[RMDB]
RNA sequence: GGGAACGACUCGAGUAGAGUCGAAAAUGUUCGAGAAGACUGUUACGCCGAGCGACGUCGGGAAGCUGAACCGUUUAGUGAUACCGAAACAACACGCGGAGAAGCAUUUUCCGUUACCGGCGAUGACGUUCUAGCGUGAUUUCGAUCACGCUAGAACAAAAGAAACAACAACAACAAC
Reactivity to 2A3 in 0.01 (KOAc 150mM, MgCl2 10mM, bicine 150mM(pH8.5), 24C), signal-to-noise 2, nucleotides 027 to 126: u090g030u030u050c030g000a010g050a210a040g080a090c090u070g020u050u010a020c010g000c030c000g050a090g060c050g090a120c020g020u220c060g000g020g040a010a010g000c000u010g010a000a010c000c020g020u020u050u210a050g000u000g020a040u040a130c030c130g170a130a100a040c060a030a000c020a010c050g000c000g010g010a020g050a020a000g030c060a080u060u000u020u000c010c000g010u020u030a050c010c030g000g000c020g030a070u110g010a000c010
Reactivity to DMS in 0.01 (KOAc 150mM, MgCl2 10mM, bicine 150mM(pH8.5), 24C), signal-to-noise 2, nucleotides 027 to 126: u000g030u000u000c040g040a100g010a090a110g010a130c040u020g000u020u000a110c000g010c000c000g000a140g080c020g030a040c070g010u000c140g000g020g000a010a060g000c010u020g040a300a250c020c020g010u000u000u020a040g000u000g000a050u010a160c220c130g020a050a130a120c180a070a040c050a050c000g050c010g000g000a060g000a250a100g010c010a080u000u010u000u000c010c020g000u010u000a120c040c000g000g000c030g020a060u020g010a030c040
About this RNA
Source: RMDB library OK2TRN, as collected in RNAgym. An RNA of 177 nucleotides, treated with 2A3 and DMS and read out base by base. For 2A3 the reverse transcriptase was SuperScript II with manganese. Reactivities are given for positions 27 through 126.